[RMDB]
RNA sequence: GGGAACGACUCGAGUAGAGUCGAAAAAGGUUCCCUCAGAACGGUCGGCAAUCGUUCGAAGAGUGUAAUGGCAUAAGGGAGCUUGACUGUGAGACAUACAAGUCGAUCAGGUACGAAAGUAGAGCAUAGGGUUAUAAUCGUUCGCGAUUAUAACCCUAAAAGAAACAACAACAACAAC
Reactivity to DMS in 0.01 (KOAc 150mM, MgCl2 10mM, bicine 150mM(pH8.5), 24C), signal-to-noise 1, nucleotides 027 to 126: a070g030g010u010u000c020c000c020u000c100a190g000a030a000c000g010g000u010c090g000g000c060a140a050u050c010g060u020u000c000g000a070a100g030a040g040u030g040u040a020a050u010g000g000c010a100u020a070a120g000g000g000a170g020c010u000u000g000a040c010u010g010u010g010a300g000a000c040a140u000a180c300a090a060g000u000c000g010a060u000c000a000g000g010u000a070c050g030a000a080a060g030u000a070g000a040g030c060a240u000